[RMDB]
RNA sequence: GGGAACGACUCGAGUAGAGUCGAAAAGCAUUAAGAGAGUACUCUUAUUCCCACAACGUUGGUGACAACGUUGAUUUUCCGGUGGCCACCCGCCCGGGCCACCGUUACUCCACUCCACUCCUUCGGGACUGGUUUGGAGGAACACAUGAGGGCUAAAAUAAUUACGUCAGUUCGCUGACGUAAUUAUAAAAGAAACAACAACAACAAC
Reactivity to 2A3 in 0.01 (KOAc 150mM, MgCl2 10mM, bicine 150mM(pH8.5), 24C), signal-to-noise 3, nucleotides 027 to 156: g050c030a080u100u070a010a000g020a010g020a040g200u160a170c000u000c000u010u010a010u030u000c000c010c010a010c000a000a000c000g000u000u000g030g070u130g060a050c000a020a020c010g000u000u000g030a050u090u050u180u070c060c000g000g000u000g000g030c030c010a040c070c080c060g000c000c000c000g000g000g020c000c000a000c000c000g000u000u050a020c000u000c000c000a000c010u020c000c000a010c010u010c000c010u020u070c210g050g000g000a000c010u010g020g000u010u010u000g000g000a000g020g000a030a020c140a010c010a150u170g180a050g000g000g000c000u000a000a020a000
Reactivity to DMS in 0.01 (KOAc 150mM, MgCl2 10mM, bicine 150mM(pH8.5), 24C), signal-to-noise 1, nucleotides 027 to 156: g000c080a080u000u000a090a040g000a080g010a300g050u000a080c030u020c010u000u020a130u000u000c020c000c010a300c020a020a010c000g000u000u000g030g040u000g000a300c000a030a000c000g010u000u000g000a050u000u000u000u000c080c050g110g090u000g000g050c000c010a040c040c000c260g020c040c000c020g000g000g000c020c000a010c080c030g010u000u000a090c000u000c030c000a070c000u000c000c000a050c040u020c000c000u010u000c300g030g060g000a050c040u000g000g000u000u010u000g020g020a020g000g010a040a040c050a080c090a110u000g000a110g060g010g020c020u000a030a090a140
Chemical mapping of a 207-nucleotide RNA with 2A3 and DMS.
The data come from the RNA Mapping Database (RMDB), library OK3TST.
The reactions ran in a buffer of 150 mM KOAc, 10 mM MgCl2 and 150 mM bicine (pH 8.5), at 24 C.
For DMS the reverse transcriptase was MarathonRT.
For DMS, 2,291 sequencing reads were counted.